About this RNA:
Source: RMDB library TTRDEL, as collected in RNAgym. Chemical mapping of a 177-nucleotide RNA with DMS. Conditions: 150 mM KOAc, 10 mM MgCl2 and 150 mM bicine (pH 8.5), 24 C. For DMS, 538 sequencing reads were counted. DMS adducts were read by reverse transcription with MarathonRT. Values cover nucleotides 27 to 126.
RNA sequence: GGGAACGACUCGAGUAGAGUCGAAAAGAUAUGGAGUUCUACCCACCUCUAUGGAGCGUUGAAAUCGGAAACGAUGGAGCUCCUAAGGAGAGGAACUCCUAAGUCAAAAGGUGCCUUCGGGCACCAAUCAACGAGGUACGUUCGCGUACCUCGUUGAAAAAGAAACAACAACAACAAC
Reactivity to DMS in 0.01 (KOAc 150mM, MgCl2 10mM, bicine 150mM(pH8.5), 24C), signal-to-noise 1, nucleotides 027 to 126: g020a100u030a260u000g010g000a090g000u000u000c040u020a210c030c030c010a300c110c000u000c010u000a300u000g000g000a000g000c030g000u000u010g000a110a150a030u000c030g000g010a070a120a120c000g000a030u000g000g000a050g010c000u000c000c000u030a040a040g000g000a000g000a160g070g040a000a010c000u000c010c000u000a060a060g010u040c180a040a060a080a190g000g030u000g010c000c000u000u030c210g030g000g010c080a010c000c010a000a010